[RMDB]
RNA sequence: GGGAACGACUCGAGUAGAGUCGAAAAGCCUAAUUUGGGUAACAAGUGCAGUGCGUCCUAGUGGCUCUGAGUGAGGGUUCCGUCCCCUCUCAUCCAUUACAAACGCCCUUUGCCAGUUCCGUCUGGUCUAUAAAUUCUAUUUCGAUAGAAUUUAUAGAAAAGAAACAACAACAACAAC
Reactivity to DMS in 0.01 (KOAc 150mM, MgCl2 10mM, bicine 150mM(pH8.5), 24C), signal-to-noise 8, nucleotides 027 to 126: g010c010c000u010a080a140u010u010u020g010g010g010u010a060a060c080a060a080g010u020g020c030a030g010u000g000c020g010u000c090c300u000a020g010u000g000g010c010u010c010u000g000a030g010u000g010a140g030g010g000u000u040c270c200g000u020c020c010c000c010u000c000u000c010a000u040c010c000a020u000u000a020c160a110a170a040c040g000c000c040c020u010u010u020g020c000c020a070g000u000u000c040c040g010u010c010u000g000g000u010
Reactivity to 2A3 in 0.01 (KOAc 150mM, MgCl2 10mM, bicine 150mM(pH8.5), 24C), signal-to-noise 9, nucleotides 027 to 126: g020c000c000u060a160a200u120u160u180g070g000g020u080a070a030c050a130a050g040u090g200c010a010g010u010g030c010g010u010c010c010u020a010g010u010g010g000c000u000c000u020g010a010g010u030g030a300g060g020g000u250u270c060c060g190u300c030c010c000c000u000c000u000c000a050u150c000c000a000u010u010a010c020a000a080a000c010g000c020c020c000u060u100u080g000c000c000a010g010u050u040c010c010g020u010c050u070g030g020u000
Source information: The record gives the reactivity of an RNA of 177 nucleotides to DMS and 2A3. The reactions ran in a buffer of 150 mM KOAc, 10 mM MgCl2 and 150 mM bicine (pH 8.5), at 24 C. Reactivities are given for positions 27 through 126.